[RMDB]
RNA sequence: GGGAACGACUCGAGUAGAGUCGAAAACAUCUUUCCUCCCUACACAGUGACUCCAGCUUGGGAGGGGCAGGGCUAGGCUGAGACAGCACUCCCUGUGGUGUCUGCCUGCCACGUGCAGCUCUGGAGUAAAACCUGGAGAAGUUCGCUUCUCCAGGAACUGCACUUAUACCUUCGGGUAUAAGUGCAGAAAAGAAACAACAACAACAAC
Reactivity to 2A3 in 0.01 (KOAc 150mM, MgCl2 10mM, bicine 150mM(pH8.5), 24C), signal-to-noise 2, nucleotides 027 to 156: c040a050u080c080u020u080u040c010c000u120c040c000c000u190a190c220a070c100a240g100u040g090a040c000u000c000c000a010g000c110u040u080g000g010g000a000g010g010g010g000c010a010g030g030g000c010u240a010g000g010c030u030g070a010g020a060c000a010g000c010a040c020u170c100c050c110u030g000u020g000g050u000g020u010c040u020g000c000c000u030g000c110c000a120c050g220u100g020c020a090g040c030u040c060u090g010g000a000g000u010a000a000a000a000c000c000u000g000g010a000g000a000a000g000u040u250c220g050c110u000u000c000u000c030c020a000g000g010a000a000